[RMDB]
RNA sequence: GGGAACGACUCGAGUAGAGUCGAAAACACGCGAAAUGCGGCGAAGCGAUUGCUGGAGACGACAGAGAAAAUCCGGGUUCCGAUCGACGAUGCACUCGACGAGAAUUGGAAACACAAGCUACGCUUGUGCACCGAUCUCAUUCGUGAGAUCGGUGCAAAAAGAAACAACAACAACAAC
Reactivity to DMS in 0.01 (KOAc 150mM, MgCl2 10mM, bicine 150mM(pH8.5), 24C), signal-to-noise 3, nucleotides 027 to 126: c080a140c060g000c060g000a030a190a040u000g030c060g010g000c070g010a140a110g010c050g010a110u010u020g050c030u000g020g010a120g010a130c100g010a060c080a060g000a120g000a080a070a080a140u020c030c000g000g010g000u000u010c030c040g000a050u000c040g000a100c080g010a080u000g020c180a130c010u000c030g010a060c030g000a090g000a030a040u010u020g000g010a040a090a110c080a040c050a100a020g010c000u010a110c160g020c020u010u000g040
Reactivity to 2A3 in 0.01 (KOAc 150mM, MgCl2 10mM, bicine 150mM(pH8.5), 24C), signal-to-noise 2, nucleotides 027 to 126: c010a000c020g020c030g010a180a130a120u200g000c040g010g010c000g070a050a010g060c000g150a190u020u110g000c020u060g030g010a050g020a010c130g030a020c110a060g190a000g070a070a120a010a030u040c000c020g030g060g000u040u040c030c020g030a160u050c000g020a030c050g020a020u130g040c030a020c030u020c010g050a060c040g010a030g030a090a070u090u070g040g020a050a110a020c030a000c010a020a060g000c030u190a050c180g010c010u000u000g040